[RMDB]
RNA sequence: GGGAACGACUCGAGUAGAGUCGAAAAAUGGUGGCGUUGGAACUGGAAAAUCGACAAGCUUGCCUAGUGAAAUUAUGAAAUUUGGUCCAGUUUUAAUUUGCGUACCCACGAGAGUAUUGGCCAACGCUAGACAUGUACUCUUCGGAGUACAUGUCUAAAAAGAAACAACAACAACAAC
Reactivity to 2A3 in 0.01 (KOAc 150mM, MgCl2 10mM, bicine 150mM(pH8.5), 24C), signal-to-noise 1, nucleotides 027 to 126: a030u180g030g060u060g050g070c010g000u000u020g060g000a040a000c000u010g000g070a010a040a000a020u110c060g010a050c040a030a020g060c010u100u140g070c000c050u080a040g080u070g170a080a080a210u280u140a110u140g080a090a110a120u000u070u060g040g010u010c000c000a000g010u110u040u000u020a010a040u000u030u170g050c040g040u070a040c000c050c020a040c050g240a230g000a010g030u110a090u240u120g020g000c000c000a020a000c000g000c000
Reactivity to DMS in 0.01 (KOAc 150mM, MgCl2 10mM, bicine 150mM(pH8.5), 24C), signal-to-noise 2, nucleotides 027 to 126: a020u000g020g000u020g000g040c020g000u000u000g000g000a060a020c010u000g010g000a050a070a030a090u040c090g010a120c060a060a140g000c070u010u020g000c040c040u000a100g020u010g000a060a060a080u000u020a090u010g010a130a040a100u000u000u010g020g010u000c010c010a030g010u000u000u010u000a020a100u000u010u020g020c040g010u010a130c040c000c020a130c160g000a130g010a110g000u000a090u010u010g020g000c030c010a000a040c040g000c070
The data come from the RNA Mapping Database (RMDB), library OK2TRN. The record gives the reactivity of an RNA of 177 nucleotides to 2A3 and DMS. Values are in units of 0.01, from 0 to 300, in steps of 10. 2A3 adducts were read by reverse transcription with SuperScript II with manganese. For DMS, 1,736 sequencing reads were counted. The 2A3 profile rests on 781 reads.